[RMDB]
RNA sequence: GGGAACGACUCGAGUAGAGUCGAAAAGGCGAUUGAGAGGCCCUCUCAUUAAUGCGGAGGUGUCACGCUGACAGAAUGAUAUUAGAUGUCCGCUUCCGGUUACAUCGCGGCGAUGAUUACAUAGGACAUCGAUUACCCAUUCGCUUCGGGGAAGCAAAAUCCAUCCAUCAUUCGUGAUGGAUGGAUUAAAAGAAACAACAACAACAAC
Reactivity to DMS in 0.01 (KOAc 150mM, MgCl2 10mM, bicine 150mM(pH8.5), 24C), signal-to-noise 2, nucleotides 027 to 156: g040g020c040g020a180u010u000g000a140g040a130g020g020c020c020c040u000c030u020c070a190u000u040a080a140u000g000c090g020g010a030g010g030u000g020u000c000a070c090g010c020u000g000a190c090a110g020a080a050u010g010a110u000a050u010u010a170g010a080u010g040u000c010c000g030c120u000u000c090c050g010g010u000u000a110c070a060u000c010g020c030g000g050c120g020a100u000g000a140u010u010a090c080a120u010a120g000g010a040c000a030u000c020g000a170u000u000a050c050c000c030a170u000u010c050g000c060u000u010c060g010g010g000g000a080a070g000c080a080a090
Reactivity to 2A3 in 0.01 (KOAc 150mM, MgCl2 10mM, bicine 150mM(pH8.5), 24C), signal-to-noise 3, nucleotides 027 to 156: g020g010c030g060a060u080u150g090a150g020a070g080g000c000c030c000u000c000u000c000a120u100u300a210a110u170g060c150g000g000a010g010g030u100g010u050c050a020c030g020c070u040g030a030c020a090g110a090a070u110g040a020u050a060u160u080a080g000a000u010g010u000c000c030g010c030u100u010c020c010g000g000u010u060a030c010a040u030c030g010c070g240g000c090g020a040u040g050a070u040u140a050c050a050u170a110g020g000a000c000a010u010c010g010a000u020u050a010c000c020c000a010u040u000c050g010c000u020u030c050g050g020g040g000a020a010g020c040a090a050

Structure probing data (DMS and 2A3) for a 207-nucleotide construct. 2A3 is a SHAPE reagent: it acylates the 2'-hydroxyl of flexible nucleotides of all four kinds. The 2A3 profile rests on 2,090 reads. The reactions ran in a buffer of 150 mM KOAc, 10 mM MgCl2 and 150 mM bicine (pH 8.5), at 24 C. It was measured as part of the RMDB library OK3TST.